[RMDB]
RNA sequence: GGGAACGACUCGAGUAGAGUCGAAAAAUCUGGUGUCAACGGCGGCACGUUCACGCUGUCUGUCGCGGGCAAUGCCACUGAUGCGCUUGCUUUUGAUGCAACAGCAACUGUCGUGAAGAACGCGCUUCGUAAGCUCGCAGGCGCGACAGAAGCAGAACGGGACGUAAUGGUUCGCCAUUACGUCCCGAAAAGAAACAACAACAACAAC
Reactivity to 2A3 in 0.01 (KOAc 150mM, MgCl2 10mM, bicine 150mM(pH8.5), 24C), signal-to-noise 1, nucleotides 027 to 156: a000u120c100u090g060g000u010g010u060c060a170a070c050g120g020c070g020g000c000a000c050g010u060u070c070a090c180g010c060u170g140u240c000u010g020u010c010g000c000g010g000g000c090a120a140u260g010c000c010a050c150u030g000a050u050g000c010g000c000u010u100g030c000u060u100u020u300g090a080u120g010c050a110a050c000a110g070c050a080a020c060u150g040u160c020g060u110g070a070a030g030a050a060c030g000c000g000c000u000u000c000g090u050a030a030g000c060u060c090g000c020a010g230g010c030g000c000g000a020c000a000g000a000a000g020c000a000g000a110a000